Chemical mapping of a 177-nucleotide RNA with DMS. Values cover nucleotides 27 to 126. For DMS, 1,596 sequencing reads were counted. The data come from the RNA Mapping Database (RMDB), library M2PK50. Conditions: 150 mM KOAc, 10 mM MgCl2 and 150 mM bicine (pH 8.5), 24 C.

[RMDB]
RNA sequence: GGGAACGACUCGAGUAGAGUCGAAAAGAACCGCGAUUCGUCGCGGUUCGAGCGCCCUAGCGCGCAACGGCGUAACGGCAGCAUUAGCGCGCAGCUGCCGACGAUCGGGUGGUUUCGACCACCCGAACGUGCUAAGUCCGUUCGCGGACUUAGCACGAAAAGAAACAACAACAACAAC
Reactivity to DMS in 0.01 (KOAc 150mM, MgCl2 10mM, bicine 150mM(pH8.5), 24C), signal-to-noise 2, nucleotides 027 to 126: g020a010a000c000c000g030c000g020a010u000u020c190g000u000c000g010c000g010g000u010u000c010g000a060g020c130g010c000c010c040u000a170g040c030g010c010g010c100a070a060c110g000g020c040g010u020a140a160c110g000g000c050a030g000c010a080u000u000a140g000c070g050c020g020c040a140g010c010u000g000c010c000g000a080c050g010a060u000c000g000g000g050u000g000g010u000u000u000c110g000a040c000c000a010c000c000c000g010a000a000